[RMDB]
RNA sequence: GGGAACGACUCGAGUAGAGUCGAAAAGGCUUCGGUGUCCGGCGUCACGCCCGCCAGGCUGGAGGAGUUCUACAGCCGGCACUGGCAACAUCAGAUCCCAUUAUCUGAUGAUUACGAGUGGAUGGACCAAAUUCGAUGCUUUCGAGCAUCGAAUUUGAAAAGAAACAACAACAACAAC
Reactivity to 2A3 in 0.01 (KOAc 150mM, MgCl2 10mM, bicine 150mM(pH8.5), 24C), signal-to-noise 1, nucleotides 027 to 126: g040g030c030u070u020c050g020g030u080g020u120c050c000g000g090c010g080u100c040a040c130g010c030c030c000g000c030c000a070g020g000c010u010g030g000a020g100g030a050g020u120u000c050u100a090c000a020g010c000c000g000g030c060a060c040u030g020g010c040a060a030c000a010u000c000a020g000a030u040c010c070c050a030u130u230a030u040c010u000g000a010u000g070a160u070u110a080c160g030a040g050u030g070g030a150u080g030g000a000c020
Reactivity to DMS in 0.01 (KOAc 150mM, MgCl2 10mM, bicine 150mM(pH8.5), 24C), signal-to-noise 2, nucleotides 027 to 126: g030g000c020u000u010c070g000g010u000g010u000c030c050g010g010c050g000u010c140a070c120g030c050c030c090g010c030c020a070g000g000c010u000g010g000a050g000g010a220g010u000u000c030u000a070c050a070g020c000c010g000g000c030a010c020u000g010g020c030a090a090c000a010u010c010a000g020a010u010c160c150c160a130u000u000a050u000c000u000g010a010u000g010a110u010u000a060c130g010a050g000u000g010g000a110u010g000g000a090c160